[RMDB]
RNA sequence: GGGAACGACUCGAGUAGAGUCGAAAAUAGUUGGGCCGCAGCCACAAGCAGGACAAAGUCUCGAAUUGACUUGGAGCAAGACUUUGAGUCAACCGGCCUAAUGUAUUAUGGUUGCGUGUGAGUCCGCAAACUUUUGUAGUUUCGACUACAAAAGUUUAAAAGAAACAACAACAACAAC
Reactivity to 2A3 in 0.01 (KOAc 150mM, MgCl2 10mM, bicine 150mM(pH8.5), 24C), signal-to-noise 5, nucleotides 027 to 126: u220a020g070u110u070g010g000g000c020c010g000c000a000g020c030c020a020c000a030a010g040c030a010g030g070a060c100a050a180a000g030u030c040u050c150g120a160a150u030u020g000a020c010u010u020g010g010a010g010c090a150a080g090a240c010u000u000u040g000a000g000u000c000a010a000c060c020g000g000c000c000u040a020a010u000g020u020a240u130u030a040u090g040g010u030u020g000c010g040u190g070u060g120a030g060u000c010c020g040c080
Reactivity to DMS in 0.01 (KOAc 150mM, MgCl2 10mM, bicine 150mM(pH8.5), 24C), signal-to-noise 8, nucleotides 027 to 126: u020a070g010u000u000g000g000g020c020c010g010c010a030g000c000c010a030c140a060a090g030c030a080g000g010a080c190a090a120a070g000u000c020u030c050g020a100a300u010u010g000a010c010u000u010g000g000a020g010c050a140a110g010a300c000u000u000u000g010a020g000u000c010a000a070c180c040g000g000c120c030u000a060a070u010g010u000a050u000u010a100u000g000g010u000u000g010c010g020u040g000u020g000a100g000u010c010c000g020c260